Notes: The record gives the reactivity of an RNA of 177 nucleotides to 2A3 and DMS. For 2A3 the reverse transcriptase was SuperScript II with manganese.
RNA sequence: GGGAACGACUCGAGUAGAGUCGAAAAUGAGAAGUCGUCAGUAGUUCGACGUGAGCAGAAGCCCGCCUCGAUAUGCUAUGUGGACGAGGGCAUGCCCAAGACACAGCUUAACCCUAGCGGGACGCAAGUCACGAUAUUGCUUCGGCAAUAUCGUGACAAAAGAAACAACAACAACAAC
Reactivity to 2A3 in 0.01 (KOAc 150mM, MgCl2 10mM, bicine 150mM(pH8.5), 24C), signal-to-noise 2, nucleotides 027 to 126: u180g010a040g030a110a030g110u010c020g000u000c010a080g100u090a020g020u160u050c040g000a000c020g000u080g070a040g000c030a030g040a280a020g070c000c000c000g030c000c030u060c020g040a030u030a010u190g010c040u030a060u180g200u040g110g030a140c020g040a050g000g020g000c070a040u150g030c030c000c000a020a020g010a000c010a000c000a020g000c010u040u080a070a070c030c000c000u000a040g000c030g000g000g020a010c010g000c020a060a060
Reactivity to DMS in 0.01 (KOAc 150mM, MgCl2 10mM, bicine 150mM(pH8.5), 24C), signal-to-noise 3, nucleotides 027 to 126: u010g000a040g010a100a140g010u010c000g000u000c060a120g020u010a090g020u010u010c080g000a050c090g000u010g010a130g020c040a180g020a110a150g010c000c000c030g010c020c020u000c070g000a040u000a040u000g000c030u000a030u010g020u000g000g000a100c080g000a300g000g000g030c050a050u000g010c030c010c000a070a300g000a110c050a010c050a050g000c030u000u000a050a120c030c000c010u000a110g020c060g010g000g010a060c100g020c110a070a090

The DMS profile rests on 1,980 reads. Values cover nucleotides 27 to 126. The RNA was probed in 150 mM KOAc, 10 mM MgCl2 and 150 mM bicine (pH 8.5) at 24 C. The 2A3 profile rests on 2,571 reads. For DMS the reverse transcriptase was MarathonRT.